[RMDB]
RNA sequence: GGGAACGACUCGAGUAGAGUCGAAAAGUCUCACGAGUGCAAAGACAAAGGUAGUUGACUCCGGGGCUACCAGUACUCGAAGGAAUGCGAAAGAGUUCAAGUAUUCCAACCGGAGAAGAACUCAAAACAUGAUGAUAGGCUUCGGCCUAUCAUCAUGAAAAGAAACAACAACAACAAC
Reactivity to 2A3 in 0.01 (KOAc 150mM, MgCl2 10mM, bicine 150mM(pH8.5), 24C), signal-to-noise 2, nucleotides 027 to 126: g050u000c000u000c010a040c000g000a000g000u000g000c010a040a130a100g100a170c040a100a120a020g050g010u030a020g000u000u020g080a140c000u010c000c000g000g000g020g000c000u000a000c000c000a000g030u010a000c000u000c000g000a040a010g020g000a100a010u070g000c030g120a080a070a180g150a060g000u080u050c050a060a040g080u040a030u090u000c030c020a080a050c040c000g000g080a000g000a000a020g020a060a040c050u020c020a010a000a000a200
Reactivity to DMS in 0.01 (KOAc 150mM, MgCl2 10mM, bicine 150mM(pH8.5), 24C), signal-to-noise 1, nucleotides 027 to 126: g020u020c000u000c010a300c070g010a010g010u040g010c110a140a040a000g020a060c300a010a130a090g000g000u040a000g000u000u000g000a090c000u000c030c000g000g000g000g000c000u010a000c000c020a050g010u000a000c010u000c010g030a070a100g020g000a080a020u030g020c080g020a140a140a300g000a000g000u000u000c010a250a090g030u000a020u000u000c090c160a070a110c000c000g030g000a000g070a140a040g000a060a050c040u010c060a020a020a130a070